[RMDB]
RNA sequence: GGGAACGACUCGAGUAGAGUCGAAAAGAUAUGGAAUUAGUCCCUACAACUGCGUUGAAAUCGGAAACGAUGGAGCAGUGUAGAACCUAAUUCCUAAGUCAAAUCUGAUGACUUCGGUCAUCAGAAACGUAUGAAUUUUCUUCGGAAAAUUCAUACGAAAAGAAACAACAACAACAAC
Reactivity to DMS in 0.01 (KOAc 150mM, MgCl2 10mM, bicine 150mM(pH8.5), 24C), signal-to-noise 3, nucleotides 027 to 126: g010a030u000a300u010g000g000a030a000u010u000a020g000u000c130c240c020u000a030c000a080a070c010u000g010c010g000u020u000g000a060a090a030u010c000g000g010a100a070a230c020g020a020u000g000g000a080g020c000a000g010u000g020u010a010g010a100a160c210c010u000a010a000u000u000c000c010u000a050a090g000u000c030a100a110a200u010c000u000g000a010u000g000a010c000u000u000c180g010g000u000c000a010u000c000a000g000a000a050a120
Reactivity to 2A3 in 0.01 (KOAc 150mM, MgCl2 10mM, bicine 150mM(pH8.5), 24C), signal-to-noise 3, nucleotides 027 to 126: g040a030u120a020u170g000g010a000a020u010u000a020g040u060c090c000c030u010a010c040a300a290c010u000g000c020g210u300u060g030a040a030a000u010c010g040g000a080a060a040c000g000a000u010g000g050a040g000c000a000g000u000g000u000a000g000a020a010c010c000u010a020a000u010u010c000c000u010a120a020g100u030c030a010a040a240u000c000u000g000a000u000g000a000c000u030u070c300g120g000u000c000a000u020c000a000g000a030a040a000